[RMDB]
RNA sequence: GGGAACGACUCGAGUAGAGUCGAAAAGAUAUGGAUCGUCCAAGGACGAGGAUCCGUAACAUCCGUCGGAAACGACGGUGGGGGAGUCCGACGACGAUCCUAAGUCAAAGAGCCGUUCGCGGCUCAACUAUCACUGCUACUUCGGUAGCAGUGAUAGAAAAGAAACAACAACAACAAC
Reactivity to DMS in 0.01 (KOAc 150mM, MgCl2 10mM, bicine 150mM(pH8.5), 24C), signal-to-noise 3, nucleotides 027 to 126: g000a040u000a300u010g000g000a010u000c010g000u000c000c040a090a300g020g000a010c000g040a080g010g000a030u000c000c010g000u000a040a030c140a030u010c000c000g000u010c000g010g030a170a140a200c020g000a010c000g030g050u030g000g000g000g010g020a040g010u000c020c000g010a300c300g000a010c000g000a010u000c000c000u000a010a080g000u000c040a090a080a140g010a030g000c000c000g010u000u010c120g020c010g000g030c010u000c030a000a120
Reactivity to 2A3 in 0.01 (KOAc 150mM, MgCl2 10mM, bicine 150mM(pH8.5), 24C), signal-to-noise 2, nucleotides 027 to 126: g010a010u090a050u170g000g000a030u000c000g000u010c020c010a020a050g010g000a000c030g070a240g080g020a000u000c010c010g020u020a040a020c050a300u120c020c000g010u000c000g010g070a070a030a090c020g000a010c000g010g000u000g030g020g000g000g000a020g010u020c020c010g010a010c020g010a000c000g010a020u010c000c000u000a010a000g000u000c000a060a150a130g000a000g000c020c000g010u040u140c300g020c020g130g000c000u000c000a010a010
Structure probing data (DMS and 2A3) for a 177-nucleotide construct. Values cover nucleotides 27 to 126.